[RMDB]
RNA sequence: GGGAACGACUCGAGUAGAGUCGAAAAAGAUAUGGAGCCUUGCAAGAAGAAUGUAGGGCAACAGCAGGCUUCGGAAACGAAGCCUGACAUGCCUAUUAUAGCUUUGAUGACCAAGGCUCCUAAGUCACCCCCAAUAUUACUUCGGUAAUAUUGGGGGAAAAGAAACAACAACAACAAC
Reactivity to DMS in 0.01 (KOAc 150mM, MgCl2 10mM, bicine 150mM(pH8.5), 24C), signal-to-noise 2, nucleotides 027 to 126: a130g020a050u000a300u000g000g010a050g000c000c010u010u000g000c030a110a110g010a010a000g020a070a130u010g030u010a130g030g000g010c010a000a020c270a200g020c000a010g010g020c010u000u000c020g000g000a150a100a180c000g000a020a000g000c000c010u000g020a030c110a230u010g010c000c000u000a050u000u000a060u000a100g000c000u000u000u000g000a120u010g030a170c300c000a010a030g000g050c000u010c000c000u000a010a120g020u020c020a230
Reactivity to 2A3 in 0.01 (KOAc 150mM, MgCl2 10mM, bicine 150mM(pH8.5), 24C), signal-to-noise 2, nucleotides 027 to 126: a030g060a050u100a000u090g000g000a020g000c020c020u020u040g000c050a300a230g020a010a010g010a180a100u100g060u180a170g050g090g000c090a050a030c070a040g140c000a030g000g000c050u000u010c000g000g000a020a050a010c020g020a010a030g020c000c000u000g050a000c000a030u020g020c030c020u090a160u300u120a140u110a090g020c020u070u070u080g190a300u190g000a050c100c000a010a000g010g000c000u010c010c000u010a030a020g000u000c020a060